Description:
This 177-nucleotide RNA was probed chemically with 2A3 and DMS. Conditions: 150 mM KOAc, 10 mM MgCl2 and 150 mM bicine (pH 8.5), 24 C.
[RMDB]
RNA sequence: GGGAACGACUCGAGUAGAGUCGAAAAGUGUGGAAGCUGGUUUGCCGGGGCCACCCAGUGUGGGCUCAGGAAGGGAAGGAAUGUGACCAAGGCUGGGUGUGGCUGGGGAGAGCACAGCCAGUUGUGGCUGUGGUCAAUGCUUCGGCAUUGACCACAGAAAAGAAACAACAACAACAAC
Reactivity to 2A3 in 0.01 (KOAc 150mM, MgCl2 10mM, bicine 150mM(pH8.5), 24C), signal-to-noise 5, nucleotides 027 to 126: g140u120g010u080g050g030a070a050g030c050u040g020g050u070u130u140g040c020c020g040g020g010g000c010c020a020c020c010c010a020g020u020g020u050g110g060g020c010u020c040a050g070g060a100a070g050g010g050a030a050g080g060a130a080u120g040u080g050a040c000c020a030a030g090g000c010u010g000g000g010u050g010u050g080g000c050u060g010g020g020g000a110g000a010g010c010a010c000a090g020c000c000a010g000u030u040g050u020g060g000
Reactivity to DMS in 0.01 (KOAc 150mM, MgCl2 10mM, bicine 150mM(pH8.5), 24C), signal-to-noise 3, nucleotides 027 to 126: g010u010g020u010g000g010a150a070g020c110u010g010g020u030u000u020g010c000c010g000g020g000g010c030c070a050c010c010c040a030g020u030g000u010g010g000g020c030u020c020a030g010g000a170a130g020g010g030a130a090g000g010a180a100u010g010u000g000a100c020c020a030a080g020g000c020u000g000g020g010u020g000u020g020g000c030u000g000g010g020g010a120g020a090g000c030a010c020a030g000c000c000a090g010u000u030g000u010g010g010

For DMS the reverse transcriptase was MarathonRT.